An RNA of 207 nucleotides, treated with 2A3 and DMS and read out base by base. The data come from the RNA Mapping Database (RMDB), library RFM130. For DMS the reverse transcriptase was MarathonRT. The reactions ran in a buffer of 150 mM KOAc, 10 mM MgCl2 and 150 mM bicine (pH 8.5), at 24 C.

[RMDB]
RNA sequence: GGGAACGACUCGAGUAGAGUCGAAAAGCAUCACAGUACUGUGGUACAGAGAAGCACAUCGCACUGGAGGUGAUUUCUUCCAUCACCUGCGGCUCCAUGUACUUCGCUGUUCCACAGUACUGGAAACGAAAAAUCAUGAGUCUUCGGACUCAUGAAAGAUUAUUUUGUGGUUCGCCACAAAAUAAUCAAAAGAAACAACAACAACAAC
Reactivity to 2A3 in 0.01 (KOAc 150mM, MgCl2 10mM, bicine 150mM(pH8.5), 24C), signal-to-noise 6, nucleotides 027 to 156: g070c030a060u100c060a020c000a040g000u000a000c000u000g000u000g000g000u000a000c000a000g010a000g000a010a000g010c020a000c000a000u030c040g020c030a030c050u060g050g180a000g000g010u010g010a020u060u090u120c110u220u070c110c030a000u000c000a000c000c000u100g070c010g010g000c020u010c030c010a000u000g000u000a020c000u000u000c010g000c030u000g000u010u010c000c000a000c000a000g000u000a000c000u000g000g000a000a000a000c030g050a070a020a010a010a060u020c000a000u010g000a000g000u000c010u030u090c210g090g000a000c000u000c000a000u000g000a000a010a000
Reactivity to DMS in 0.01 (KOAc 150mM, MgCl2 10mM, bicine 150mM(pH8.5), 24C), signal-to-noise 3, nucleotides 027 to 156: g010c060a150u000c070a210c010a000g020u000a020c010u010g060u000g010g010u000a030c000a040g010a020g000a030a020g030c010a010c010a030u000c060g030c180a060c020u020g030g010a040g060g040u000g000a050u000u010u000c190u020u020c300c190a140u000c000a030c000c000u010g010c000g020g000c010u000c060c080a010u000g020u000a010c000u000u010c010g010c000u010g010u000u000c020c020a020c010a030g020u000a010c000u000g000g000a030a130a150c080g030a040a090a090a120a210u000c000a010u000g020a040g020u000c010u000u010c300g020g000a030c010u010c010a000u000g000a070a050a150